Structure probing data (2A3 and DMS) for a 177-nucleotide construct.

[RMDB]
RNA sequence: GGGAACGACUCGAGUAGAGUCGAAAAGCACAAGCCUGGCGCGCUCCAAUCGAACUCGUUGUAGGAAAUAGUGCGCCGGAACGCUCGAAGCCGUAUCUUCCGGGCUGUUUUCUACGACAAUUAGGAACCCUAUCAUGCCUUUCGAGGCAUGAUAGGGAAAAGAAACAACAACAACAAC
Reactivity to 2A3 in 0.01 (KOAc 150mM, MgCl2 10mM, bicine 150mM(pH8.5), 24C), signal-to-noise 5, nucleotides 027 to 126: g050c030a040c020a150a040g040c000c010u030g050g000c010g000c000g000c040u010c000c020a030a080u090c080g080a030a080c060u030c170g000u020u010g000u000a000g010g060a000a000a010u050a010g080u100g090c090g070c040c000g000g000a010a020c020g020c030u070c100g140a150a050g070c090c020g050u090a120u090c060u020u020c030c000g020g050g000c000u000g000u020u010u000u000c010u000a020c000g010a020c010a040a050u160u090a080g070g090a040a050
Reactivity to DMS in 0.01 (KOAc 150mM, MgCl2 10mM, bicine 150mM(pH8.5), 24C), signal-to-noise 2, nucleotides 027 to 126: g010c020a100c070a110a090g000c040c080u000g050g020c030g010c080g030c050u010c030c010a080a250u070c080g000a080a150c100u010c140g000u000u000g010u020a010g000g020a010a000a010u000a040g030u020g000c090g000c060c000g020g040a060a030c110g020c020u000c040g000a130a180g030c110c060g020u020a100u000c170u020u010c000c000g000g020g020c000u040g010u000u030u000u000c000u010a020c020g000a070c080a020a000u070u080a200g000g000a020a130
Source: RMDB library OK1LIB, as collected in RNAgym. The reactions ran in a buffer of 150 mM KOAc, 10 mM MgCl2 and 150 mM bicine (pH 8.5), at 24 C. High 2A3 reactivity points to a flexible backbone, as in loops and unpaired stretches. For 2A3, 4,045 sequencing reads were counted.